Chemical mapping of a 177-nucleotide RNA with DMS and 2A3. The 2A3 profile rests on 323 reads. The reactions ran in a buffer of 150 mM KOAc, 10 mM MgCl2 and 150 mM bicine (pH 8.5), at 24 C.
[RMDB]
RNA sequence: GGGAACGACUCGAGUAGAGUCGAAAAAAUCCAUAUAAGAAAAUCUCUUUUAAUGAGGAGUGAUGUAGUUACAAACUCUCCAGAGCCAUAAUUAGAGCAAACUAAUUGAAGUUGUGUUUUGACACACACCUUUACAUCUUUUCGAAGAUGUAAAGGUAAAAGAAACAACAACAACAAC
Reactivity to DMS in 0.01 (KOAc 150mM, MgCl2 10mM, bicine 150mM(pH8.5), 24C), signal-to-noise 2, nucleotides 027 to 126: a100a060u000c000c000a060u010a140u020a100a100g020a170a070a080a120u000c000u000c000u000u000u010u030a060a120u030g010a110g020g000a070g000u010g020a100u000g020u010a080g030u040u030a180c100a060a080a120c080u000c010u000c000c040a060g000a110g040c080c010a060u000a000a020u000u000a000g000a090g010c230a090a100a090c060u010a030a120u020u010g000a050a200g010u000u010g000u000g000u000u000u000u000g000a050c080a060c090a020c120
Reactivity to 2A3 in 0.01 (KOAc 150mM, MgCl2 10mM, bicine 150mM(pH8.5), 24C), signal-to-noise 1, nucleotides 027 to 126: a000a000u190c040c050a010u160a000u070a080a070g110a030a080a060a070u000c000u000c000u020u000u000u100a090a050u070g050a030g030g000a000g000u020g060a130u120g020u100a070g160u210u150a050c060a000a120a000c020u000c000u000c000c010a010g010a000g170c090c030a100u060a050a070u110u020a030g020a000g040c020a000a000a210c000u110a050a120u090u150g110a090a000g010u010u030g000u000g000u000u130u000u020g110a030c020a000c000a000c010

High DMS reactivity at an A or C suggests that its Watson-Crick edge is free.